This 177-nucleotide RNA was probed chemically with DMS and 2A3. For DMS the reverse transcriptase was MarathonRT. 2A3 adducts were read by reverse transcription with SuperScript II with manganese. The data come from the RNA Mapping Database (RMDB), library OK2TRN. Conditions: 150 mM KOAc, 10 mM MgCl2 and 150 mM bicine (pH 8.5), 24 C.

[RMDB]
RNA sequence: GGGAACGACUCGAGUAGAGUCGAAAAAGUACUUUUGUCAUAUACGACAAUACAAUUGAACGUAAUAGUAUCGCAGGCGUUAGAUAUUUAAGAACUAAACCAAUAGACAAGACUGACGAAGAUGAAGCGAACGUUUUACAUUCGUGUAAAACGUUCGAAAAGAAACAACAACAACAAC
Reactivity to DMS in 0.01 (KOAc 150mM, MgCl2 10mM, bicine 150mM(pH8.5), 24C), signal-to-noise 1, nucleotides 027 to 126: a080g010u000a030c020u030u000u000u000g030u000c020a120u020a180u030a100c150g020a070c000a010a010u000a060c100a070a170u000u020g010a200a110c120g000u000a040a080u010a090g000u020a020u000c050g000c120a100g030g050c040g000u000u000a080g000a060u020a030u000u000u000a150a130g010a030a040c070u010a040a090a040c010c090a070a100u000a010g000a100c050a020a070g010a100c100u010g000a070c040g010a050a110g040a070u000g000a080a070g020
Reactivity to 2A3 in 0.01 (KOAc 150mM, MgCl2 10mM, bicine 150mM(pH8.5), 24C), signal-to-noise 1, nucleotides 027 to 126: a000g120u120a140c060u050u130u070u020g120u000c000a000u190a000u010a300c050g000a000c000a000a000u010a090c030a000a120u000u190g010a180a000c030g010u050a040a040u100a190g030u010a050u250c030g000c000a010g090g070c080g100u060u000a030g000a080u030a170u120u140u130a210a030g000a030a000c010u090a090a000a030c010c010a150a030u080a080g060a010c000a070a060g060a000c000u000g010a030c040g100a020a000g080a090u100g090a040a000g040